[RMDB]
RNA sequence: GGGAACGACUCGAGUAGAGUCGAAAAGAAUUGGUAUGUAAGCUACUUCUUCCAGUAGCUGCUUCAUAACAUCAAGGUUAUGCAUACUGAGCCGAAGCUCAGCUUCGGUCCUCCAAGGAAGACCAAAUACAGCUCAGCCCGUUCGCGGGCUGAGCAAGUUACCUAAUUGGUUCGCCAAUUAGGUAACAAAAGAAACAACAACAACAAC
Reactivity to 2A3 in 0.01 (KOAc 150mM, MgCl2 10mM, bicine 150mM(pH8.5), 24C), signal-to-noise 1, nucleotides 027 to 156: g080a000a070u020u020g000g010u010a000u000g000u020a000a020g000c000u000a000c000u080u110c000u020u000c010c000a000g010u000a000g000c000u000g020c000u010u020c000a000u000a000a000c010a050u260c220a160a050g280g000u000u000a000u010g000c000a000u000a000c000u020g010a000g000c000c000g010a000a000g000c030u070c300a030g000c000u020u000c000g000g000u000c010c000u030c010c030a050a060g000g000a000a000g010a000c030c070a030a090a030u230a140c080a020g000c010u000c000a000g000c020c010c000g030u060u060c110g010c020g060g000g030c000u010g000a000g000c000a000a000
Reactivity to DMS in 0.01 (KOAc 150mM, MgCl2 10mM, bicine 150mM(pH8.5), 24C), signal-to-noise 2, nucleotides 027 to 156: g010a050a110u000u010g000g020u020a020u000g030u000a150a100g020c000u000a010c010u000u000c030u000u010c070c070a300g000u000a010g020c010u000g010c110u000u010c030a030u000a030a040c010a300u000c190a170a140g030g010u010u000a030u010g020c020a070u010a040c040u000g020a140g010c010c000g020a030a040g020c010u000c160a120g000c000u010u000c010g000g010u000c000c010u010c030c020a090a170g050g000a070a050g000a200c070c080a040a070a120u010a090c090a100g000c000u000c000a020g000c000c010c010g000u000u000c300g050c070g010g000g060c030u000g020a000g000c010a000a020